[RMDB]
The record gives the reactivity of an RNA of 177 nucleotides to DMS and 2A3. DMS adducts were read by reverse transcription with MarathonRT.

RNA sequence: GGGAACGACUCGAGUAGAGUCGAAAAGAUAUGGAUGGCAUGAACGCAACAGCCCAUUCGGUUUCGGAAACGAAACCGAGAUGGGACAUGCGUGUGCCAUCCUAAGUCAAAUCUGAGUUCGCUCAGAGACAAUACGGGAGUUCGCUCCCGUAUUGUCAAAAGAAACAACAACAACAAC
Reactivity to DMS in 0.01 (KOAc 150mM, MgCl2 10mM, bicine 150mM(pH8.5), 24C), signal-to-noise 3, nucleotides 027 to 126: g010a030u000a300u000g000g000a030u000g020g000c000a000u000g000a170a040c000g010c010a070a070c300a250g010c000c010c000a000u000u000c000g000g010u020u000u000c000g010g000a100a080a260c010g000a000a010a010c000c000g000a030g030a030u000g010g000g000a020c090a160u000g000c000g040u000g030u000g010c020c000a000u000c000c010u000a000a080g000u000c020a080a130a240u000c000u000g010a000g010u000u000c300g010c010u000c010a000g010a040
Reactivity to 2A3 in 0.01 (KOAc 150mM, MgCl2 10mM, bicine 150mM(pH8.5), 24C), signal-to-noise 2, nucleotides 027 to 126: g020a020u070a000u170g000g020a020u000g010g010c020a020u060g300a160a030c000g030c000a010a140c080a280g130c000c010c000a000u020u000c000g020g050u010u010u010c020g000g010a050a080a090c000g010a020a010a000c000c000g020a010g010a010u010g000g020g040a020c020a070u040g000c000g000u020g010u000g020c000c000a010u020c000c010u000a030a020g000u000c040a120a050a170u050c010u010g020a010g020u120u190c300g100c090u000c010a010g050a010